[RMDB]
RNA sequence: GGGAACGACUCGAGUAGAGUCGAAAAGGGGUCCUACUUCAGGGAACCCUGGAGCCUUGGAUUUAUAUACUGAAGCCUCCACGGUAUAUUGUCAGGCUCCAUGUGCUUCCCUGGGUAGGACGGAGGCACCCAAAAGCGGUCCCUUCGGGGACCGCAACUACGACAUAAGGUUCGCCUUAUGUCGUAGAAAAGAAACAACAACAACAAC
Reactivity to 2A3 in 0.01 (KOAc 150mM, MgCl2 10mM, bicine 150mM(pH8.5), 24C), signal-to-noise 1, nucleotides 027 to 156: g010g020g030g040u030c010c010u010a020c010u220u300c010a000g030g000g020a010a010c000c000c000u000g000g000a010g000c000c010u070u190g130g010a120u300u300u020a010u040a010u000a010c000u020g040a140a060g030c040c060u010c050c020a050c000g020g000u000a000u000a000u000u000g070u050c090a090g000g000c000u010c000c000a000u040g060u040g030c190u080u050c030c000c000u000g010g010g000u020a000g000g000a000c030g000g000a020g020g000c060a040c000c030c010a000a150a020a060g000c010g000g000u000c000c000c000u060u100c250g010g000g010g040a000c010c000g000c000a000a000
The record gives the reactivity of an RNA of 207 nucleotides to 2A3. Reactivities are given for positions 27 through 156. Source: RMDB library RNAMAK, as collected in RNAgym. The reactions ran in a buffer of 150 mM KOAc, 10 mM MgCl2 and 150 mM bicine (pH 8.5), at 24 C. 2A3 is a SHAPE reagent: it acylates the 2'-hydroxyl of flexible nucleotides of all four kinds.